[RMDB]
RNA sequence: GGGAACGACUCGAGUAGAGUCGAAAAGAUGCUUGGAGUGUUCGUACCUGGCGCAAGCCAGGGCAAGUGAGGCGCAAGCCUCGCUGACGGCGUGGAAAGGGCUCUCUCUGAGGCCCGAGUACGCUGACAUGUUAUUACGCUUCGGCGUAAUAACAUGAAAAGAAACAACAACAACAAC
Reactivity to DMS in 0.01 (KOAc 150mM, MgCl2 10mM, bicine 150mM(pH8.5), 24C), signal-to-noise 4, nucleotides 027 to 126: g010a080u000g010c040u000u020g020g020a100g020u000g000u000u000c080g030u000a110c000c000u000g000g020c000g010c300a110a140g010c000c000a010g000g010g000c120a030a030g020u010g000a010g020g010c000g010c250a080a140g010c000c010u000c000g000c000u000g000a220c070g010g010c050g020u010g010g000a070a160a220g010g010g010c010u020c010u000c030u020c160u020g010a010g000g000c000c000c000g010a050g010u000a040c030g020c030u010g000a240
Reactivity to 2A3 in 0.01 (KOAc 150mM, MgCl2 10mM, bicine 150mM(pH8.5), 24C), signal-to-noise 1, nucleotides 027 to 126: g030a010u150g010c070u070u110g110g010a050g040u050g040u060u080c070g040u080a210c010c010u010g000g000c010g000c010a130a000g000c010c000a000g000g000g020c000a000a020g010u000g010a000g000g000c010g000c070a020a020g000c000c010u000c000g000c010u010g010a020c050g020g060c020g000u020g040g000a070a050a060g050g000g000c040u020c010u010c020u010c140u300g030a020g020g010c000c000c000g010a010g000u020a000c000g010c010u000g040a020